An RNA of 177 nucleotides, treated with DMS and read out base by base. It was measured as part of the RMDB library OK2TRN. DMS adducts were read by reverse transcription with MarathonRT. For DMS, 606 sequencing reads were counted. The reactions ran in a buffer of 150 mM KOAc, 10 mM MgCl2 and 150 mM bicine (pH 8.5), at 24 C.

RNA sequence: GGGAACGACUCGAGUAGAGUCGAAAAGUAUUCGGAAUCUUGCACGCCCUCGCUCAAGCCUUCGUCACUCCAAACGUUUCGGCGAGAAGCAGGCCAUUAUCGCCGGCAUGGCGGCCGACGCGCUGGGCACGGGGUGACUCUUCGGAGUCACCCCGUGAAAAGAAACAACAACAACAAC
Reactivity to DMS in 0.01 (KOAc 150mM, MgCl2 10mM, bicine 150mM(pH8.5), 24C), signal-to-noise 1, nucleotides 027 to 126: g040u000a090u040u000c030g000g030a100a120u010c060u000u000g000c040a110c090g000c030c010c010u010c080g090c010u000c030a200a110g000c040c090u010u010c110g060u020c060a060c050u020c060c010a120a040a090c060g010u000u000u010c040g020g040c000g020a040g030a110a110g000c050a120g000g010c120c060a030u020u010a070u000c150g000c000c030g000g050c170a050u000g000g020c060g000g000c070c000g020a180c040g010c130g020c070u010g000g010g000